RNA sequence: GGGAACGACUCGAGUAGAGUCGAAAAACAAUGGAAGAAUUCAAUACUGAAGAUCGACCGGUGACUCCACCUAUGGAAUUUUCAUGGGAAUUCGAGGAGAAAUUCGAAAGAGUACGCUCCACACGGAGCUAAAACAGCGCUUCGGCGCUGUUUUAGCAAAAGAAACAACAACAACAAC
Reactivity to 2A3 in 0.01 (KOAc 150mM, MgCl2 10mM, bicine 150mM(pH8.5), 24C), signal-to-noise 2, nucleotides 027 to 126: a000c050a020a050u200g020g010a020a000g020a000a060u000u000c020a040a130u250a240c280u060g000a000a010g180a240u000c000g010a020c000c010g040g000u060g010a020c050u010c010c000a020c000c000u000a000u000g060g010a100a190u120u080u140u080c000a040u020g000g000g000a020a080u170u100c100g010a080g020g010a010g010a060a080a010u080u030c000g010a050a000a060g000a000g020u130a080c020g000c000u000c000c000a040c000a000c020g110g010a050
Reactivity to DMS in 0.01 (KOAc 150mM, MgCl2 10mM, bicine 150mM(pH8.5), 24C), signal-to-noise 1, nucleotides 027 to 126: a040c000a110a020u000g010g000a110a210g000a040a170u000u000c060a070a120u000a180c120u000g080a000a000g000a030u000c030g000a250c060c030g070g000u030g000a100c010u000c110c150a200c000c040u000a040u010g000g030a000a100u000u000u070u000c000a010u000g000g000g000a200a060u000u000c290g020a060g010g000a070g000a090a050a100u000u000c000g000a130a150a190g070a000g000u000a070c000g000c040u000c020c000a030c180a020c240g020g010a020

The record gives the reactivity of an RNA of 177 nucleotides to 2A3 and DMS. For 2A3 the reverse transcriptase was SuperScript II with manganese. The reactions ran in a buffer of 150 mM KOAc, 10 mM MgCl2 and 150 mM bicine (pH 8.5), at 24 C. DMS adducts were read by reverse transcription with MarathonRT.